[RMDB]
RNA sequence: GGGAACGACUCGAGUAGAGUCGAAAAGAAAGAAAGAAAUUAGCUCGCCAGUUAGCGAGGUCUGUCCCCACACGACAGAUAAUGGGGUGCAACUCCCGCCCCUUUUCCGAGGGUCAUCGGAACCAAAAAAACUCAGGCAACUUCGGUUGCCUGAGAACGUCAUAUAUAUGUUCGCAUAUAUAUGACGAAAAGAAACAACAACAACAAC
Reactivity to DMS in 0.01 (KOAc 150mM, MgCl2 10mM, bicine 150mM(pH8.5), 24C), signal-to-noise 1, nucleotides 027 to 156: g000a170a120a080g000a130a150a110g020a100a120a130u000u010a130g000c010u000c020g040c000c020a270g000u000u040a080g020c010g040a000g020g000u000c020u000g020u020c000c000c000c210a160c070a100c250g000a050c040a050g070a020u000a030a080u020g000g000g020g000u020g000c060a100a300c010u010c000c030c000g000c020c010c020c020u000u000u000u010c010c020g020a020g010g020g050u020c090a060u010c000g000g000a020a110c120c020a010a000a050a100a060a070a140c000u020c010a000g020g050c000a010a000c020u000u000c300g010g060u000u000g000c000c000u010g000a000g000a000a050
Reactivity to 2A3 in 0.01 (KOAc 150mM, MgCl2 10mM, bicine 150mM(pH8.5), 24C), signal-to-noise 4, nucleotides 027 to 156: g040a010a050a010g060a020a100a020g060a050a140a030u150u080a090g050c010u010c000g000c030c030a150g130u140u210a020g010c000g000a000g000g010u000c000u010g020u020c050c020c010c000a030c010a010c050g030a000c010a020g020a020u040a070a100u120g020g000g000g010u010g010c020a030a030c040u030c020c010c000g140c010c000c000c040u060u130u030u000c000c000g010a010g020g000g040u090c030a010u010c000g000g010a000a010c040c030a110a100a050a020a000a020a040c000u000c000a000g000g000c010a000a000c010u040u070c130g090g000u010u030g000c010c010u000g000a000g000a000a000